[RMDB]
RNA sequence: GGGAACGACUCGAGUAGAGUCGAAAAAGUGUAGUAUCUAGGACGCCCGACGAGGCGGGAAGUUUAUGUGCUUCGUCGGAGGGGUGCAGAGGUUUUCGUGUCCGCGAUGCAGGGUCGACUCUGUGAGGGGGCGGGCGUCGUUCGCGAUGUUUGCCCCAAAAGAAACAACAACAACAAC
Reactivity to 2A3 in 0.01 (KOAc 150mM, MgCl2 10mM, bicine 150mM(pH8.5), 24C), signal-to-noise 9, nucleotides 027 to 126: a000g110u110g020u080a090g020u020a070u070c060u050a040g050g040a030c030g050c020c000c000g010a010c010g000a010g020g000c040g030g070g030a070a030g020u080u140u160a180u240g170u120g000c000u000u010c000g010u000c010g010g010a030g010g020g000g010u090g000c020a010g020a070g050g040u070u060u060u140c050g010u040g040u040c020c000g010c030g030a030u120g030c040a030g040g000g030u040c010g020a040c010u000c010u020g030u040g050a100g000
Reactivity to DMS in 0.01 (KOAc 150mM, MgCl2 10mM, bicine 150mM(pH8.5), 24C), signal-to-noise 9, nucleotides 027 to 126: a070g010u020g010u010a060g010u010a030u000c030u010a170g000g010a070c060g010c060c010c010g000a020c010g010a030g000g010c000g010g010g010a070a170g010u020u030u040a060u060g020u020g000c000u000u000c000g010u000c010g000g000a100g000g000g000g010u010g000c020a040g000a080g000g010u020u010u020u010c060g010u010g000u010c010c010g010c080g010a070u020g010c050a100g010g000g000u000c030g000a070c020u000c020u000g010u020g000a130g010
Chemical mapping of a 177-nucleotide RNA with 2A3 and DMS. Values cover nucleotides 27 to 126. Conditions: 150 mM KOAc, 10 mM MgCl2 and 150 mM bicine (pH 8.5), 24 C. It was measured as part of the RMDB library OK1LIB.